Chemical mapping of a 177-nucleotide RNA with 2A3 and DMS. The reactions ran in a buffer of 150 mM KOAc, 10 mM MgCl2 and 150 mM bicine (pH 8.5), at 24 C.

[RMDB]
RNA sequence: GGGAACGACUCGAGUAGAGUCGAAAAGAAAGAAAGAAACAGCACCCCGAUAUAUCUGGUUGUUAGGUCCGGUUCGCUUUGGUCGGUUGGACCGGACAGGGCACGCCCGCUUCGGUGGGCGUUUUAACAUACACAUCAGGUUCGCCUGAUGUGUAUGAAAAGAAACAACAACAACAAC
Reactivity to 2A3 in 0.01 (KOAc 150mM, MgCl2 10mM, bicine 150mM(pH8.5), 24C), signal-to-noise 4, nucleotides 027 to 126: g100a010a110a040g110a010a090a020g090a010a130a000c030a020g040c010a050c010c010c000c020g060a030u080a000u000a030u140c100u130g090g000u030u030g030u030u080a060g010g080u000c000c010g020g010u000u000c010g030c050u060u050u130g100g020u100c070g030g010u130u290g110g000a000c000c000g000g010a000c000a000g010g050g000c040a000c010g000c000c000c000g000c010u030u020c190g050g000u010g020g000g000c010g020u020u010u000u010a020a000
Reactivity to DMS in 0.01 (KOAc 150mM, MgCl2 10mM, bicine 150mM(pH8.5), 24C), signal-to-noise 5, nucleotides 027 to 126: g000a050a090a090g000a080a060a080g000a090a060a070c050a060g010c060a110c060c000c010c030g010a070u050a070u010a080u010c110u020g000g010u000u000g000u000u000a080g020g010u000c010c000g000g010u000u000c010g000c010u000u010u020g010g010u030c180g000g010u000u020g050g000a020c000c000g000g010a000c010a030g000g000g000c180a050c010g010c010c000c000g030c010u000u030c110g010g030u000g010g010g010c000g000u000u000u010u010a070a210

For 2A3 the reverse transcriptase was SuperScript II with manganese.